[RMDB]
RNA sequence: GGGAACGACUCGAGUAGAGUCGAAAAGCCGCGUCUCGCUACUUCGAGCAGAUCAAGCGCAACGAUCCUGCGAUCAAUGAUCAGGAAGCUGCGAACCAAGCUAUCCAGAUGGCACAGGCCAAUGGCUUGGAGAUCAGUGGUCGCUACGCAUGGCAGAUCCUUCCGAGAUCUUCGGAUCUCGGAAGGAAAAAGAAACAACAACAACAAC
Reactivity to DMS in 0.01 (KOAc 150mM, MgCl2 10mM, bicine 150mM(pH8.5), 24C), signal-to-noise 1, nucleotides 027 to 156: g000c000c030g020c070g030u020c010u010c030g000c040u000a040c040u000u090c000g030a170g000c010a200g110a100u000c010a060a130g030c080g000c000a050a070c060g030a090u000c040c000u000g020c090g070a220u000c100a150a170u000g030a080u000c030a060g000g010a200a160g010c050u000g020c060g000a210a220c030c010a030a030g000c020u000a040u000c030c030a230g030a170u010g050g030c030a230c120a080g030g030c000c000a170a110u010g000g010c010u030u000g000g000a100g000a060u000c070a110g000u000g040g000u030c070g030c030u010a030c080g010c050a110u010g030g000c060a060g030a170
Reactivity to 2A3 in 0.01 (KOAc 150mM, MgCl2 10mM, bicine 150mM(pH8.5), 24C), signal-to-noise 2, nucleotides 027 to 156: g030c020c000g000c020g030u060c070u060c060g000c000u030a020c040u070u040c090g140a040g020c060a020g000a020u050c030a090a070g080c020g000c040a050a050c050g040a090u040c000c020u040g000c030g090a040u090c040a240a110u110g020a100u070c000a020g070g020a010a050g030c040u060g000c020g000a010a020c010c000a000a000g000c010u010a030u120c050c050a170g130a290u130g060g000c050a110c220a240g300g010c010c040a020a020u000g010g000c020u000u000g010g000a070g000a060u010c010a000g000u040g040g020u140c030g000c000u020a000c010g020c020a070u140g030g000c000a040g000a130
An RNA of 207 nucleotides, treated with DMS and 2A3 and read out base by base. Source: RMDB library OK3TST, as collected in RNAgym. The 2A3 profile rests on 1,168 reads. The DMS profile rests on 1,309 reads. For DMS the reverse transcriptase was MarathonRT. Reactivities are given for positions 27 through 156.